[RMDB]
RNA sequence: GGGAACGACUCGAGUAGAGUCGAAAAACGGAUAGAUUCGUCUAUCCGUGCAUCUCAUAACAGACAGAGAAAGUCUCCUAAGAUCUCACUUAGAUAAAGAGAAGAGAGUCGAGUUCGCUCGACUCAACGAAUUGCUCAGAUUCGUCUGAGCAAUUCGAAAAGAAACAACAACAACAAC
Reactivity to 2A3 in 0.01 (KOAc 150mM, MgCl2 10mM, bicine 150mM(pH8.5), 24C), signal-to-noise 2, nucleotides 027 to 126: a000c000g000g020a010u000a000g010a010u010u070c230g000u010c080u000a010u000c000c000g000u000g000c000a070u020c020u010c010a070u130a190a060c040a050g100a050c020a020g100a000g120a130a130a050g040u040c010u010c020c000u010a040a030g010a140u020c030u020c100a050c030u030u050a040g070a200u140a180a110a000g060a000g000a130a050g070a020g000a000g040u000c010g010a010g020u050u050c220g040c050u000c010g010a000c000u000c020a000a000
Reactivity to DMS in 0.01 (KOAc 150mM, MgCl2 10mM, bicine 150mM(pH8.5), 24C), signal-to-noise 2, nucleotides 027 to 126: a010c010g000g000a000u000a000g000a020u000u020c210g080u000c010u000a000u000c000c010g040u000g000c230a120u000c000u000c010a210u010a070a060c240a060g000a010c080a120g000a140g010a070a120a120g010u000c040u020c150c040u000a040a010g000a080u000c030u010c060a050c000u010u000a050g020a170u010a030a070a030g000a010g010a140a130g010a170g000a000g030u000c000g020a020g010u010u010c130g020c010u000c010g000a000c000u000c000a020a070